[RMDB]
RNA sequence: GGGAACGACUCGAGUAGAGUCGAAAAAGCCGCCGCUUACGAGCGGCGGCAAUGGUCUGCUGCUGGAUGCGUUUGAUGGUCGCUCCCUUGGGGCCCACCACCAGUCCCACCACGCGGUAGGGUACAAGAUACCACAUUUUUUCGAAAAUGUGGUAUCAAAAGAAACAACAACAACAAC
Reactivity to 2A3 in 0.01 (KOAc 150mM, MgCl2 10mM, bicine 150mM(pH8.5), 24C), signal-to-noise 2, nucleotides 027 to 126: a010g160c010c040g000c000c030g040c070u080u110a130c270g140a020g000c000g000g000c000g000g000c000a010a020u050g000g030u010c010u100g020c020u030g010c020u040g050g060a140u070g030c030g070u030u210u170g090a140u070g040g000u020c020g010c020u000c000c020c020u080u160g040g000g000g000c020c010c000a020c000c000a000c000c010a010g050u040c020c000c000a010c030c000a010c050g090c030g000g010u030a020g050g000g030u080a030c030a040a080
Reactivity to DMS in 0.01 (KOAc 150mM, MgCl2 10mM, bicine 150mM(pH8.5), 24C), signal-to-noise 1, nucleotides 027 to 126: a110g010c010c040g150c020c000g130c030u000u000a080c180g000a070g130c000g150g010c000g000g070c010a010a010u000g020g020u010c020u000g010c000u000g000c010u000g010g000a080u000g020c290g020u010u000u010g010a070u010g010g000u000c250g020c000u000c010c020c070u000u010g010g000g000g010c060c040c070a090c040c000a080c060c000a120g010u010c030c040c020a090c070c010a080c150g000c030g000g010u000a090g000g000g000u000a080c110a030a110
The record gives the reactivity of an RNA of 177 nucleotides to 2A3 and DMS. DMS adducts were read by reverse transcription with MarathonRT. Reactivities are rounded to 0.1 and cut off at 0 and 3. Conditions: 150 mM KOAc, 10 mM MgCl2 and 150 mM bicine (pH 8.5), 24 C.